[RMDB]
RNA sequence: GGGAACGACUCGAGUAGAGUCGAAAAGAAUCAUUGAACGCCAUCAGGCCAAAUGAUUUUUACCGUUGCAUCAUGUCGCCCAAUAUGAUGCUUGCUCGUACCAGGCCCCUGCAAUUUCAACAGGGGCGAAGCCAUCCAAGUUCGCUUGGAUGGCUUCAAAAGAAACAACAACAACAAC
Reactivity to DMS in 0.01 (KOAc 150mM, MgCl2 10mM, bicine 150mM(pH8.5), 24C), signal-to-noise 2, nucleotides 027 to 126: g010a010a000u000c010a010u020u000g000a160a160c300g020c020c000a150u010c220a160g010g000c000c070a120a030a010u000g000a010u020u010u000u010u000a090c110c080g020u010u010g010c000a010u000c000a010u000g000u000c040g000c010c040c020a070a050u000a040u000g010a010u000g000c020u000u000g000c060u000c150g000u000a090c090c100a110g030g020c000c030c000c020u000g000c050a080a080u000u000u000c090a130a070c010a010g000g010g020g020c010
The record gives the reactivity of an RNA of 177 nucleotides to DMS.